[RMDB]
RNA sequence: GGGAACGACUCGAGUAGAGUCGAAAACGUGAAGAUCUCGACGACUCAACGGAGCGGCGCCUGAUGAUUAUAGACCCCAUCAAGGUCGUGAUUGACAACUGGGACGGUGAGAUGGAGGCGGAGUGCCCGGUCACGGAGCAUUCGUGCUCCGUGACCGAAAAGAAACAACAACAACAAC
Reactivity to 2A3 in 0.01 (KOAc 150mM, MgCl2 10mM, bicine 150mM(pH8.5), 24C), signal-to-noise 3, nucleotides 027 to 126: c030g060u050g090a070a000g010a120u020c050u000c030g010a030c000g020a020c000u020c030a110a000c090g070g020a030g000c030g040g000c000g060c000c040u030g000a060u050g010a000u010u230a070u140a300g110a150c000c000c000c020a050u010c040a050a020g020g000u070c000g000u030g060a120u080u100g030a020c030a080a030c100u040g000g020g050a040c010g000g000u060g020a030g010a000u020g030g130a080g000g000c020g000g020a040g000u110g030c020c000
Reactivity to DMS in 0.01 (KOAc 150mM, MgCl2 10mM, bicine 150mM(pH8.5), 24C), signal-to-noise 2, nucleotides 027 to 126: c030g000u010g020a090a060g010a060u010c010u010c000g000a070c030g000a070c060u010c040a030a210c190g000g000a080g020c000g000g020c070g010c180c000u000g010a070u000g000a100u030u030a160u050a100g000a090c130c140c020c030a040u060c080a090a030g000g000u000c040g010u010g000a050u020u030g010a180c160a100a160c090u040g010g010g010a060c080g000g010u000g000a050g010a020u020g000g000a130g000g020c100g000g020a080g030u020g040c010c010

Chemical mapping of a 177-nucleotide RNA with 2A3 and DMS. As a SHAPE reagent, 2A3 marks flexible, mostly unpaired nucleotides at the ribose 2'-OH. Conditions: 150 mM KOAc, 10 mM MgCl2 and 150 mM bicine (pH 8.5), 24 C. Reactivities are given for positions 27 through 126. The data come from the RNA Mapping Database (RMDB), library OK1LIB. 2A3 adducts were read by reverse transcription with SuperScript II with manganese. The 2A3 profile rests on 1,698 reads.